[RMDB]
RNA sequence: GGGAACGACUCGAGUAGAGUCGAAAAAUACAAAAUAGGAUUAGUCUGCCCAUUUUCUAUAUACGUAAGCGCUAUUUCUGAAGAAUAGCUUAUUUGAUCAUGGCAAAGGCACGGCUAAUCCUUCCAAAUUAGUUGUUUCGUUCGCGAAACAACUAAUAAAAGAAACAACAACAACAAC
Reactivity to 2A3 in 0.01 (KOAc 150mM, MgCl2 10mM, bicine 150mM(pH8.5), 24C), signal-to-noise 3, nucleotides 027 to 126: a000u240a020c090a030a050a000a090u160a040g000g000a000u000u010a000g010u000c010u000g000c010c020c020a040u020u010u020u030c010u020a030u010a020u020a140c060g070u040a080a040g090c060g010c120u000a030u010u100u040c080u180g170a120a080g010a060a030u000a000g000c010u040u000a040u050u070u110g040a020u040c080a010u010g010g060c070a020a020a060g020g000c000a010c080g000g000c000u000a000a000u000c010c020u000u010c000c000a020a000
Reactivity to DMS in 0.01 (KOAc 150mM, MgCl2 10mM, bicine 150mM(pH8.5), 24C), signal-to-noise 2, nucleotides 027 to 126: a110u080a130c250a110a050a090a090u050a000g010g000a000u000u000a000g010u000c000u000g000c010c010c140a090u020u000u000u010c000u040a020u000a030u010a020c220g000u000a040a000g000c160g020c100u000a020u000u000u000c010u070g010a140a260g000a020a020u000a030g020c000u000u000a030u000u010u020g000a030u040c130a050u000g010g020c150a110a010a140g020g000c000a010c280g000g000c000u000a010a000u010c000c000u000u010c030c020a070a050